[RMDB]
RNA sequence: GGGAACGACUCGAGUAGAGUCGAAAACUGCACUACAUGCAUCGAUCUAUGGCCCGUGGCCUGAGUAUGCGAUGAUCGCGCGUACAGGCCAGACUAGGCCUACGCGCAGCGCGAUCCGGCCUGCUGCGACGUUCUCCGGAUUCGUCCGGAGAACGUCAAAAGAAACAACAACAACAAC
Reactivity to 2A3 in 0.01 (KOAc 150mM, MgCl2 10mM, bicine 150mM(pH8.5), 24C), signal-to-noise 2, nucleotides 027 to 126: c020u050g040c010a020c110u230a080c020a110u110g040c010a060u040c040g050a040u050c030u080a100u110g060g000c000c040c090g140u160g000g030c000c010u020g030a040g030u250a080u140g070c000g020a020u090g070a060u110c060g010c010g000c000g000u010a040c050a030g000g010c020c000a000g020a050c120u090a050g000g000c000c000u010a000c000g000c000g000c000a010g040c000g000c000g030a040u000c000c000g060g000c030c010u050g000c050u040g090c050
Reactivity to DMS in 0.01 (KOAc 150mM, MgCl2 10mM, bicine 150mM(pH8.5), 24C), signal-to-noise 2, nucleotides 027 to 126: c060u000g000c020a100c120u000a080c150a180u000g000c030a030u000c070g030a060u000c050u000a080u000g010g010c010c010c160g000u010g010g000c000c010u000g010a090g030u030a070u000g000c050g000a070u000g010a150u000c160g010c000g010c000g040u000a080c210a080g000g000c000c000a120g010a050c230u000a110g000g000c000c000u000a010c090g010c020g000c000a020g020c000g030c040g010a080u000c020c030g000g010c040c000u000g000c070u000g010c210
About this RNA: Source: RMDB library OK2TRN, as collected in RNAgym. This 177-nucleotide RNA was probed chemically with 2A3 and DMS. The reactions ran in a buffer of 150 mM KOAc, 10 mM MgCl2 and 150 mM bicine (pH 8.5), at 24 C. The 2A3 profile rests on 1,629 reads.